An RNA of 207 nucleotides, treated with 2A3 and DMS and read out base by base. Reactivities are given for positions 27 through 156. For 2A3, 4,720 sequencing reads were counted. The reactions ran in a buffer of 150 mM KOAc, 10 mM MgCl2 and 150 mM bicine (pH 8.5), at 24 C.
[RMDB]
RNA sequence: GGGAACGACUCGAGUAGAGUCGAAAAUCAAUUGGAUGGGAAAGCAUGCUAUGGAUAUGAAGUUACCGUGUUAGCACUAACUCUAUAACGAGCCAUCCGAAACGUACGCUUCCCGUACGGAAACCAUCCAGGAUGGGAAAGCAUGCGGCAUGCGAAACUCUGAGAUCUAAUUCGUUAGAUCUCAGAGAAAAGAAACAACAACAACAAC
Reactivity to 2A3 in 0.01 (KOAc 150mM, MgCl2 10mM, bicine 150mM(pH8.5), 24C), signal-to-noise 5, nucleotides 027 to 156: u120c020a010a100u090u060g020g010a010u000g010g000g100a080a130a040g010c010a010u020g000c000u100a050u100g090g030a110u070a070u200g100a110a040g050u030u040a050c110c080g030u030g060u090u140a080g070c020a030c080u050a070a010c000u000c020u050a030u030a250a060c070g020a010g070c000c000a000u000c000c000g010a070a110a000c010g000u000a000c020g000c040u020u000c000c000c020g000u000a000c000g000g030a120a070a020c020c000a020u010c000c000a020g020g010a010u010g000g010g040a070a060a040g060c010a010u070g010c000g030g000c000a020u040g000c040g020a040a010a020
Reactivity to DMS in 0.01 (KOAc 150mM, MgCl2 10mM, bicine 150mM(pH8.5), 24C), signal-to-noise 3, nucleotides 027 to 156: u000c080a050a130u000u000g020g000a070u020g010g030g010a130a130a200g030c010a040u000g000c000u000a140u010g020g010a140u000a050u010g000a060a100g000u000u000a020c060c070g000u000g000u010u000a130g000c040a100c080u000a020a050c000u000c020u000a110u010a040a070c060g010a140g010c020c010a040u010c010c000g000a050a040a050c030g010u000a030c000g010c080u000u000c120c080c000g010u000a020c010g020g000a100a050a080c030c060a080u000c000c020a150g030g020a060u000g010g000g020a060a070a130g000c040a050u000g010c050g020g000c040a050u010g030c020g010a160a120a170